Conditions: 150 mM KOAc, 10 mM MgCl2 and 150 mM bicine (pH 8.5), 24 C. An RNA of 170 nucleotides, treated with 2A3 and DMS and read out base by base.
RNA sequence: GGGAACGACUCGAGUAGAGUCGAAAAGAGAUCUCCACUCAUUGGGUCCUUCGUCCAUCUCCUUUUCUUACCUUUGGCCGGCAUGGUCCCAGCCUCCUCGUCGGCGCCGGCCGGGCAACAUUCCGAGUACGAGCGAAGUUCGCUUCGCUCAAAAGAAACAACAACAACAAC
Reactivity to 2A3 in 0.01 (KOAc 150mM, MgCl2 10mM, bicine 150mM(pH8.5), 24C), signal-to-noise 6, nucleotides 027 to 129: g060a010g020a050u050c030u030c040c010a030c010u050c000a060u090u150g030g000g020u070c020c000u060u080c040g100u000c010c000a040u030c020u060c020c000u020u090u090u070c030u060u110a130c020c000u090u080u130g010g000c010c000g020g000c020a070u090g030g010u030c020c010c000a020g020c000c000u040c010c010u030c010g050u020c030g030g030c040g000c000c000g000g000c000c000g010g000g000c010a040a010c020a110u110u010c020c000g030a020g070u070a070c060
Reactivity to DMS in 0.01 (KOAc 150mM, MgCl2 10mM, bicine 150mM(pH8.5), 24C), signal-to-noise 7, nucleotides 027 to 129: g020a140g010a110u010c030u000c030c030a060c100u030c060a100u020u040g050g010g040u020c050c100u000u000c030g010u000c020c000a080u030c060u030c000c000u010u000u000u000c030u040u050a200c090c030u010u010u010g060g010c050c040g010g040c020a130u060g010g040u040c000c000c000a150g000c060c010u010c040c030u020c120g050u060c060g040g010c080g040c020c020g040g030c000c050g040g020g050c100a000a080c120a160u010u030c070c040g030a090g000u070a110c170

DMS adducts were read by reverse transcription with MarathonRT.